[RMDB]
RNA sequence: GGGAACGACUCGAGUAGAGUCGAAAAACGUGGAACAGUUCACCUUCAGCAACGUCUGUGAAUCGGUAGUUAAAUUCCGGCGGUUAGGCGAGACGGAACGUCGGCUCUACGACUACUGCGACUUCCCGGCGGAGUUCCGUGACGGAUACGUGGCGUCAAUCCCAACGGAGUUCGCUCCGUUGGGAUUAAAAGAAACAACAACAACAAC
Reactivity to 2A3 in 0.01 (KOAc 150mM, MgCl2 10mM, bicine 150mM(pH8.5), 24C), signal-to-noise 1, nucleotides 027 to 156: a010c020g040u080g050g030a090a000c070a090g010u100u030c010a110c010c000u000u110c080a040g010c000a060a030c040g050u010c020u020g070u080g130a110a050u100c050g030g060u080a020g010u170u250a170a130a040u060u010c010c110g000g020c000g050g090u070u120a010g020g070c000g040a040g080a120c090g000g000a030a020c020g020u000c000g020g000c010u010c000u090a090c040g020a000c030u030a000c020u040g020c000g030a030c040u000u000c000c000c000g030g020c000g010g000a080g070u180u030c050c000g050u070g050a010c020g010g000a080u070a120c070g040u040g050g040c000g000u130c050

Conditions: 150 mM KOAc, 10 mM MgCl2 and 150 mM bicine (pH 8.5), 24 C. The record gives the reactivity of an RNA of 207 nucleotides to 2A3. Values cover nucleotides 27 to 156. 2A3 adducts were read by reverse transcription with SuperScript II with manganese. The data come from the RNA Mapping Database (RMDB), library OK3TST.